[RMDB]
RNA sequence: GGGAACGACUCGAGUAGAGUCGAAAAUUUCAUCAUCGGCCAGAUGGUUUUUUAACUCUCUUUCGAUUUCUUCGAUCUGUUCACAGAGAUAGCCAUAAUGCUGAUGAAGUCGGGUGAGCAGUCGCACCAUUAUAUAAUCAUUCGUGAUUAUAUAAUGAAAAGAAACAACAACAACAAC
Reactivity to DMS in 0.01 (KOAc 150mM, MgCl2 10mM, bicine 150mM(pH8.5), 24C), signal-to-noise 9, nucleotides 027 to 126: u000u010u010c030a080u000c010a030u000c040g020g020c030c190a230g000a020u000g000g010u000u010u010u000u010u010a070a120c130u000c010u000c040u000u000u010c040g010a040u000u010u010c110u010u010c050g010a030u010c070u010g010u000u000c130a080c150a050g000a040g010a080u000a090g000c010c040a030u000a160a110u010g010c020u000g010a030u000g000a020a070g020u000c100g010g010g010u000g000a080g010c050a050g010u010c060g020c130a060c120
Reactivity to 2A3 in 0.01 (KOAc 150mM, MgCl2 10mM, bicine 150mM(pH8.5), 24C), signal-to-noise 6, nucleotides 027 to 126: u020u030u060c020a030u010c000a010u020c020g060g020c050c030a050g040a220u020g010g060u030u040u010u010u050u140a070a060c000u010c000u000c000u000u080u050c030g040a070u080u110u090c060u100u050c070g030a080u020c040u080g110u170u130c060a040c040a100g020a010g000a060u060a020g000c000c010a030u040a130a050u180g010c020u030g020a040u050g010a020a010g060u050c030g090g000g010u040g010a020g010c050a020g060u060c040g000c030a040c030